[RMDB]
RNA sequence: GGGAACGACUCGAGUAGAGUCGAAAAUUUGGACGCCGAUAGGUAAUUGGGACUCCAAUACAUCGGUGUCUCCAUUGGUGUCUCAAAUAUCAAUUGGAGACAUAUUUGGCAUUUUUACAGAAAUGCCCCUAGGUUGCACAUUCGUGUGCAACCUAGGAAAAGAAACAACAACAACAAC
Reactivity to 2A3 in 0.01 (KOAc 150mM, MgCl2 10mM, bicine 150mM(pH8.5), 24C), signal-to-noise 5, nucleotides 027 to 126: u120u080u100g040g000a000c020g020c040c000g010a030u050a090g190g110u110a150a130u030u010g030g020g170a260c120u070c180c000a000a000u030a030c010a000u000c010g010g000u000g010u000c000u000c000c000a040u040u150g080g010u020g020u010c020u010c060a040a160a110u200a060u130c120a090a120u110u190g040g000a000g040a010c020a020u080a080u040u010u060g000g010c000a000u000u000u010u040u130a130c080a050g100a030a000a000u000g000c000c000
Reactivity to DMS in 0.01 (KOAc 150mM, MgCl2 10mM, bicine 150mM(pH8.5), 24C), signal-to-noise 2, nucleotides 027 to 126: u000u000u050g000g010a060c190g090c020c000g020a030u000a120g000g010u000a080a040u000u050g000g000g010a240c210u050c010c010a000a030u010a010c000a040u000c070g010g000u000g020u010c010u000c020c000a090u020u000g010g000u000g010u000c050u100c030a190a120a050u000a060u120c210a070a090u010u030g000g000a000g020a000c030a000u030a010u000u060u000g040g010c010a000u000u010u000u010u070a090c160a090g010a080a000a000u000g000c010c010